Chemical mapping of a 207-nucleotide RNA with 2A3 and DMS.
DMS adducts were read by reverse transcription with MarathonRT.
The RNA was probed in 150 mM KOAc, 10 mM MgCl2 and 150 mM bicine (pH 8.5) at 24 C.
It was measured as part of the RMDB library RNAMAK.
The 2A3 profile rests on 1,253 reads.

RNA sequence: GGGAACGACUCGAGUAGAGUCGAAAACAUCUAUUUCGAUAGAUGCGCAAGCGUACUACGUGCUGUAGCCAGCGAACUACAGUUCCAUUCCCAAAUAGGAAUGACACUGCGCUGGCGCAGAUAGCACGUAUCGCGAUACAGCUUAUUCGUAAGCUAAUUUAUGCAGAGGGUUCGCCCUCUGCAUAAAAAAAGAAACAACAACAACAAC
Reactivity to 2A3 in 0.01 (KOAc 150mM, MgCl2 10mM, bicine 150mM(pH8.5), 24C), signal-to-noise 2, nucleotides 027 to 156: c000a010u000c000u010a000u020u220u090c180g130a050u010a020g000a000u010g000c110g000c030a160a130g010c000g090u110a140c020u020a000c010g000u000g010c010u000g000u060a060g020c000c000a000g000c050g000a030a020c060u140a020c200a030g030u010u000c020c000a010u020u000c000c040c000a120a300a080u300a100g000g010a000a000u000g000a000c010a000c140u010g000c000g020c000u020g000g000c010g000c000a000g010a030u050a000g000c010a010c000g000u000a000u060c000g000c000g020a030u090a190c100a010g040c000u000u070a040u100u140c190g090u110a010a010g020c030u040a080a190
Reactivity to DMS in 0.01 (KOAc 150mM, MgCl2 10mM, bicine 150mM(pH8.5), 24C), signal-to-noise 2, nucleotides 027 to 156: c010a050u000c010u020a000u010u000u000c190g020a030u000a000g000a020u010g100c000g040c070a130a240g030c050g010u000a080c100u010a040c020g050u000g000c020u010g020u010a300g000c020c000a010g000c030g010a080a300c000u020a070c000a010g010u010u000c020c000a020u000u010c000c000c020a080a190a190u000a080g000g000a000a050u000g040a090c040a050c010u010g030c020g020c020u010g030g000c000g010c100a050g010a050u000a000g020c010a040c000g000u000a010u000c010g030c020g000a170u000a100c110a080g000c000u010u010a100u000u010c140g040u010a010a040g020c000u010a050a170